[RMDB]
Chemical mapping of a 170-nucleotide RNA with DMS and 2A3. Conditions: 150 mM KOAc, 10 mM MgCl2 and 150 mM bicine (pH 8.5), 24 C.
RNA sequence: GGGAACGACUCGAGUAGAGUCGAAAAGGGGCUAGCCGGUGGGUGUUCCGCCCCCCGAGAGGGGAAGAGUGAGGCUUAUCCCGGGGAACUCGACUUAUCGUCCCCACAUAGCAGUUUCCAGGACCCCAUAGCAGCCUGUUCGCAGGCUGCAAAAGAAACAACAACAACAAC
Reactivity to DMS in 0.01 (KOAc 150mM, MgCl2 10mM, bicine 150mM(pH8.5), 24C), signal-to-noise 3, nucleotides 027 to 129: g010g000g030g020c110u010a090g020c110c080g010g020u010g000g000g010u010g050u000u000c080c050g000c130c060c000c000c010c000g050a120g000a220g060g020g000g020a110a000g050a060g020u000g010a130g000g000c080u100u000a100u050c050c000c030g000g000g000g000a090a080c130u020c120g000a060c210u000u000a100u070c140g060u030c020c000c010c040a130c140a080u060a070g020c120a030g030u050u010u000c000c060a180g060g030a130c030c050c010c090a000u050a090
Reactivity to 2A3 in 0.01 (KOAc 150mM, MgCl2 10mM, bicine 150mM(pH8.5), 24C), signal-to-noise 3, nucleotides 027 to 129: g030g000g000g110c030u030a030g020c000c000g010g000u070g000g010g000u100g050u110u070c000c020g050c000c000c010c000c000c060g060a050g060a070g100g040g030g000a070a080g050a010g030u150g050a060g000g000c010u060u090a080u050c010c000c020g000g010g010g000a000a000c010u010c040g020a030c090u180u190a070u090c020g010u020c030c000c010c000a010c000a000u050a000g070c050a010g020u010u040u000c010c000a000g000g070a050c090c050c020c000a000u020a020